Structure probing data (2A3) for a 207-nucleotide construct. It was measured as part of the RMDB library M2RFPK. For 2A3 the reverse transcriptase was SuperScript II with manganese.
[RMDB]
RNA sequence: GGGAACGACUCGAGUAGAGUCGAAAACUCUUUUACUCGGCAUGAUACCACCGUUAUCGGGUCAACAGAGUAGUUGCAAAUGACAACAAUGCUCAGGGUUAUGCUCUCGCUGCCCAAUGGCGGUGCGCGGACGACUCAAUGUUCGCAUUGAGUCGAAGCCGAACAAGAGAUUCGUCUCUUGUUCGGCAAAAGAAACAACAACAACAAC
Reactivity to 2A3 in 0.01 (KOAc 150mM, MgCl2 10mM, bicine 150mM(pH8.5), 24C), signal-to-noise 2, nucleotides 027 to 156: c080u090c050u080u100u030u100a050c070u040c040g050g000c090a120u150g030a060u140a150c030c000a000c000c000g050u020u030a050u030c030g000g010g060u130c040a010a020c040a020g020a000g010u070a020g020u080u140g050c050a000a220a280u100g060a090c010a110a000c020a080a150u180g040c070u030c030a030g030g070g000u200u150a020u100g010c000u020c000u030c040g010c110u050g000c000c000c000a020a030u020g000g000c010g010g000u040g020c050g000c040g110g030a110c000g000a000c000u000c000a000a000u000g000u040u070c120g000c080a010u000u000g000a000g000u010c030g010a020a010